This 177-nucleotide RNA was probed chemically with DMS and 2A3. High 2A3 reactivity points to a flexible backbone, as in loops and unpaired stretches.
[RMDB]
RNA sequence: GGGAACGACUCGAGUAGAGUCGAAAAACGCAGUACGCUGCGAAUAUUUGGCCUGAUCCAAAGUCCAUCAAGUCCAUGGAAGUAUUUCCAUUGACAUUACUGGGCUUUGGGUCAGGCCCCUUCAUAAUUACAUGACGAGUUUCGACUCGUCAUGUAAAAAAGAAACAACAACAACAAC
Reactivity to DMS in 0.01 (KOAc 150mM, MgCl2 10mM, bicine 150mM(pH8.5), 24C), signal-to-noise 2, nucleotides 027 to 126: a190c010g020c000a000g030u000a170c180g020c000u000g000c020g000a090a070u010a110u050u010u010g020g000c010c000u050g000a000u000c010c000a000a000a010g010u000c000c000a010u000c220a090a150g020u000c000c090a000u000g020g000a000a000g030u050a130u010u000u000c000c000a000u000u000g010a010c000a050u000u020a100c230u000g000g000g020c000u000u000u000g000g000g010u000c000a020g010g010c000c030c010c020u010u000c090a100u020a060a120
Reactivity to 2A3 in 0.01 (KOAc 150mM, MgCl2 10mM, bicine 150mM(pH8.5), 24C), signal-to-noise 4, nucleotides 027 to 126: a010c010g010c010a020g020u090a020c260g020c140u010g000c030g050a070a030u250a170u100u070u120g030g000c000c000u010g000a000u010c000c000a010a000a000g000u000c010c000a020u080c090a130a000g010u000c000c000a000u010g010g040a020a020g100u240a300u080u060u010c000c000a010u000u000g000a000c020a060u000u200a030c060u000g000g000g000c000u000u000u000g000g000g010u010c010a000g000g000c000c000c000c000u020u010c010a040u040a200a030